[RMDB]
Notes:
The record gives the reactivity of an RNA of 207 nucleotides to DMS and 2A3. For DMS, 12,375 sequencing reads were counted. DMS (dimethyl sulfate) methylates the pairing face of unpaired adenines and cytosines. It was measured as part of the RMDB library OK3TST.
RNA sequence: GGGAACGACUCGAGUAGAGUCGAAAAGUAUGUGUGUUACAGCAAUGGGAUCUCCAUGGGCAAUAUUGGAGAGAACCAUUAAUACUGGUGAUACAGUAGCCAUAGUUAAACUCUUGAGGUAAUCAUCGUGGUAGAUAUUAAAGGUCUUACCGAAAGAUAAGACCAAUUGAUUCGUCAAUUGGUCUUAAAAAGAAACAACAACAACAAC
Reactivity to DMS in 0.01 (KOAc 150mM, MgCl2 10mM, bicine 150mM(pH8.5), 24C), signal-to-noise 5, nucleotides 027 to 156: g030u000a070u000g010u000g030u000g020u000u000a080c030a070g020c080a080a030u000g010g010g000a300u000c010u010c010c000a040u000g020g080g050c150a120a100u010a140u000u000g020g010a040g000a050g000a070a200c010c000a020u010u000a090a130u010a060c020u000g020g010u000g020a130u000a040c040a070g040u000a080g020c030c040a080u000a060g010u010u000a070a070a110c070u000c020u000u000g000a300g020g020u000a050a060u000c040a030u000c030g020u000g020g020u000a090g010a120u000a090u000u000a050a100a150g010g010u010c030u000u000a060c040c010g000a190a050a080g000a150
Reactivity to 2A3 in 0.01 (KOAc 150mM, MgCl2 10mM, bicine 150mM(pH8.5), 24C), signal-to-noise 6, nucleotides 027 to 156: g110u080a090u130g070u010g020u020g040u070u060a080c040a040g040c040a040a000u010g000g000g050a060u000c000u000c010c000a010u040g040g120g020c120a140a120u150a150u220u080g020g000a000g000a000g020a040a030c000c000a000u000u040a050a040u090a050c030u020g060g010u070g030a060u060a120c040a030g050u050a010g030c020c020a050u070a040g070u040u130a070a080a070c040u040c010u050u060g020a040g020g000u030a040a050u070c080a010u040c050g050u040g040g080u090a040g060a110u100a050u150u260a110a100a010g070g010u000c010u020u030a030c010c000g030a030a010a010g030a020